[RMDB]
RNA sequence: GGGAACGACUCGAGUAGAGUCGAAAAUACGUUUUAUAUCACAGCAAAUGGCGGUAUUUCAUUCUGUCGUAGGCAUAAUUGGAAUUGUGUGGAUUGUGACACUGCAGGUGUGGGGAAUACCUUCAUCGAACGCGAUACUUCGGUAUCGCGAAAAGAAACAACAACAACAAC
Reactivity to 2A3 in 0.01 (KOAc 150mM, MgCl2 10mM, bicine 150mM(pH8.5), 24C), signal-to-noise 3, nucleotides 027 to 129: u080a000c010g000u020u000u090u060a190u100a090u060c050a000c060a030g080c080a030a050a050u060g050g050c040g040g010u010a020u010u130u020c070a050u080u000c000u020g080u040c030g000u050a070g030g000c000a000u000a090a070u060u040g030g060a070a110u160u100g090u080g010u040g060g060a010u010u020g040u050g030a030c010a000c080u020g000c050a020g060g040u010g010u020g030g040g000g020a020a010u060a120c000c000u070u000c030a070u050c010g080a030a010
Reactivity to DMS in 0.01 (KOAc 150mM, MgCl2 10mM, bicine 150mM(pH8.5), 24C), signal-to-noise 3, nucleotides 027 to 129: u020a000c000g020u000u000u000u000a050u020a060u060c060a120c120a060g060c150a090a050a180u060g020g030c060g070g050u040a080u010u020u010c110a110u040u010c040u000g040u000c120g060u050a030g050g010c040a030u010a000a000u040u030g000g010a110a100u000u000g040u000g030u020g000g030a100u000u000g030u030g000a070c060a030c000u020g050c040a040g030g000u010g060u050g050g040g020g020a120a050u010a090c050c010u000u000c050a080u080c070g010a070a180